[RMDB]
RNA sequence: GGGAACGACUCGAGUAGAGUCGAAAAGAUAUGGACGUGAGUGGGUAUUUGUACAAACUAUGAUAUGAUAUGGUCGGAAACGACCAUAUCAUAUCACGAAUUUGUACUUCCCACCACGUCCUAAGUCCAAGUCCAGUAAGUUCGCUUACUGGACUUGAAAAGAAACAACAACAACAAC
Reactivity to 2A3 in 0.01 (KOAc 150mM, MgCl2 10mM, bicine 150mM(pH8.5), 24C), signal-to-noise 2, nucleotides 027 to 126: g090a030u150a050u220g020g000a010c020g020u010g010a300g100u060g030g050g080u300a300u190u300u180g020u000a010c020a000a030a000c040u070a050u110g010a010u000a010u000g000a000u010a000u000g020g000u000c040g000g090a010a290a030c010g010a000c010c000a000u000a000u000c000a000u000a010u000c000a000c020g010a010a150u020u010u000g000u000a000c000u010u000c030c000c000a000c010c000a000c000g000u000c000c020u000a000a010g010u020c030
Reactivity to DMS in 0.01 (KOAc 150mM, MgCl2 10mM, bicine 150mM(pH8.5), 24C), signal-to-noise 4, nucleotides 027 to 126: g010a110u010a300u000g010g000a020c000g020u000g000a200g040u000g000g000g010u020a070u000u010u010g010u000a010c000a000a000a010c100u000a220u000g000a000u000a010u000g000a000u000a000u000g000g000u000c000g010g000a110a130a220c010g010a010c000c000a000u000a000u000c000a000u000a000u000c000a010c110g000a040a170u000u000u010g000u000a010c000u010u000c000c000c010a010c010c000a000c000g000u000c000c000u000a000a060g000u000c050
Annotation: The record gives the reactivity of an RNA of 177 nucleotides to 2A3 and DMS. The DMS profile rests on 6,570 reads. Source: RMDB library TTRINS, as collected in RNAgym. DMS (dimethyl sulfate) methylates the pairing face of unpaired adenines and cytosines. Reactivities are given for positions 27 through 126.